Notes
Structure probing data (DMS) for a 177-nucleotide construct. Source: RMDB library TTRINS, as collected in RNAgym.
[RMDB]
RNA sequence: GGGAACGACUCGAGUAGAGUCGAAAAGAUAUGGAUGUUACAAGGUAGCUGAACGCAUUAUCCUUAUAUCGGAAACGAUAUAAGGAUAAUGCGUUACCAGCUAUAAUCUUGACGACAUCCUAAGUCACGCCUUCUAUAAGUUCGCUUAUAGAAGGCGAAAAGAAACAACAACAACAAC
Reactivity to DMS in 0.01 (KOAc 150mM, MgCl2 10mM, bicine 150mM(pH8.5), 24C), signal-to-noise 2, nucleotides 027 to 126: g010a060u000a300u020g000g010a000u000g030u000u000a210c000a030a050g010g060u000a010g010c000u000g060a050a010c020g010c000a000u010u000a000u010c000c010u000u010a010u000a000u000c000g000g020a210a150a250c000g020a000u000a000u000a020a000g000g000a000u020a000a000u000g000c000g010u000u000a020c300c050a000g010c010u000a010u000a280a120u030c010u000u000g030a180c170g010a010c010a040u000c000c000u000a050a140g000u010c060a300

Notes
The reactions ran in a buffer of 150 mM KOAc, 10 mM MgCl2 and 150 mM bicine (pH 8.5), at 24 C. The DMS profile rests on 1,541 reads.